[RMDB]
RNA sequence: GGGAACGACUCGAGUAGAGUCGAAAAGCGUACUACUAUAUCAAACAUCCGUUGAAAUAAACCUACCCACCGAUCCCAAAUAGGAUCGAGGGUUUAUGGAGGAUGCUAGAUAUAGUAUCGCAAAAUCAUCCUCGGUUCUUCGGAACCGAGGAUGAAAACAUAUUUAAAGGUUCGCCUUUAAAUAUGUAAAAGAAACAACAACAACAAC
Reactivity to DMS in 0.01 (KOAc 150mM, MgCl2 10mM, bicine 150mM(pH8.5), 24C), signal-to-noise 1, nucleotides 027 to 156: g060c030g050u020a000c160u010a020c000u000a010u000a000u000c020a100a170a050c000a020u000c010c020g040u010u000g030a180a160a050u000a000a000a040c020c000u020a050c020c000c000a300c110c000g000a010u020c000c020c000a010a170a300u020a040g020g010a000u020c010g020a130g040g010g000u000u000u000a020u000g010g020a090g020g020a010u000g010c010u000a300g020a020u000a020u010a030g010u000a000u010c010g000c020a080a070a050a180u000c020a000u000c000c000u000c030g070g000u000u000c020u000u000c280g050g000a020a010c020c010g040a020g000g010a000u010g010a000a070a160
Reactivity to 2A3 in 0.01 (KOAc 150mM, MgCl2 10mM, bicine 150mM(pH8.5), 24C), signal-to-noise 2, nucleotides 027 to 156: g000c020g030u070a050c030u000a010c010u000a030u020a000u000c010a100a110a030c000a010u000c030c000g140u150u050g030a010a040a000u000a010a010a000c010c000u010a060c090c040c060a020c010c030g000a000u010c000c010c040a170a300a280u300a130g000g010a000u000c000g000a030g010g000g000u000u000u000a000u010g010g010a010g000g000a000u000g010c000u020a010g000a010u000a000u000a000g000u000a000u080c000g000c000a070a030a000a130u020c000a000u000c000c000u010c000g020g010u000u010c010u050u100c300g100g000a010a010c010c010g000a010g020g000a000u000g000a000a000a000